[RMDB]
RNA sequence: GGGAACGACUCGAGUAGAGUCGAAAAGAGAAGGCGGACGCUCUGUCGGCGCUGGCCGAGCAGGAAGCGCGCGCAGCUGCAGCUGGGGCCGAAUUGGCCGAGGCGCGCGCGGCGCACGGCCGCACGGGCGUAGUUAACGUUUCGACGUUAACUACGCAAAAGAAACAACAACAACAAC
Reactivity to 2A3 in 0.01 (KOAc 150mM, MgCl2 10mM, bicine 150mM(pH8.5), 24C), signal-to-noise 1, nucleotides 027 to 126: g110a010g050a110a030g050g010c030g040g020a030c010g000c040u000c020u100g080u050c020g020g030c000g000c160u080g060g000c010c010g010a040g020c020a010g030g170a130a080g020c000g000c000g000c010g000c030a070g000c030u240g030c050a140g010c030u100g080g030g070g000c000c060g150a120a300u260u300g020g000c020c000g020a060g000g020c010g000c000g000c000g000c040g020g000c010g000c010a000c000g010g030c000c010g000c020a010c030g050g050
Reactivity to DMS in 0.01 (KOAc 150mM, MgCl2 10mM, bicine 150mM(pH8.5), 24C), signal-to-noise 3, nucleotides 027 to 126: g010a090g000a100a080g010g000c020g000g010a110c050g030c130u010c030u000g020u000c030g000g010c050g000c130u020g030g010c000c000g010a070g030c050a050g010g010a210a130g000c010g010c020g000c000g030c000a060g000c050u010g040c060a110g010c020u010g000g000g020g000c010c000g010a150a150u020u000g020g000c010c000g020a220g000g010c010g000c020g000c040g020c010g000g000c050g010c050a300c030g000g000c000c010g020c070a040c080g000g010